An RNA of 177 nucleotides, treated with DMS and 2A3 and read out base by base.
RNA sequence: GGGAACGACUCGAGUAGAGUCGAAAAGAAGCUUACAGCGGAUUCCUGGGAGACGUUUUACCAGACUAUCCUGCAGGGUGGCUCGGACACGUUCGACCAGCUGGCUCUCAAAGAGAAGCAGGACCUCACAGUUGAUGAGAUUCGUCUCAUCAACUGUAAAAGAAACAACAACAACAAC
Reactivity to DMS in 0.01 (KOAc 150mM, MgCl2 10mM, bicine 150mM(pH8.5), 24C), signal-to-noise 5, nucleotides 027 to 126: g010a220a240g020c010u000u020a130c210a130g030c060g000g000a200u000u000c050c010u000g010g000g020a150g000a050c060g000u000u000u000u000a150c040c010a110g000a100c120u010a070u000c010c010u010g020c130a210g010g010g010u000g000g020c140u000c100g020g010a070c190a060c170g010u000u020c050g000a140c010c010a040g010c050u010g000g010c060u000c010u000c120a110a130a150g000a060g000a080a120g010c030a050g010g010a100c120c030u010c110
Reactivity to 2A3 in 0.01 (KOAc 150mM, MgCl2 10mM, bicine 150mM(pH8.5), 24C), signal-to-noise 3, nucleotides 027 to 126: g020a080a020g010c020u160u180a090c120a080g020c030g050g070a080u070u050c000c010u020g000g030g010a020g010a010c020g010u000u010u090u100a070c030c010a010g030a060c000u050a050u040c010c010u040g080c110a100g030g070g000u050g000g000c050u010c080g030g000a010c040a000c130g080u110u080c030g000a030c000c010a020g030c050u050g080g030c010u000c010u020c090a160a150a040g050a000g020a070a010g030c000a020g000g030a050c010c020u040c030
Notes: It was measured as part of the RMDB library OK2TST. For DMS, 3,034 sequencing reads were counted. For 2A3, 3,188 sequencing reads were counted.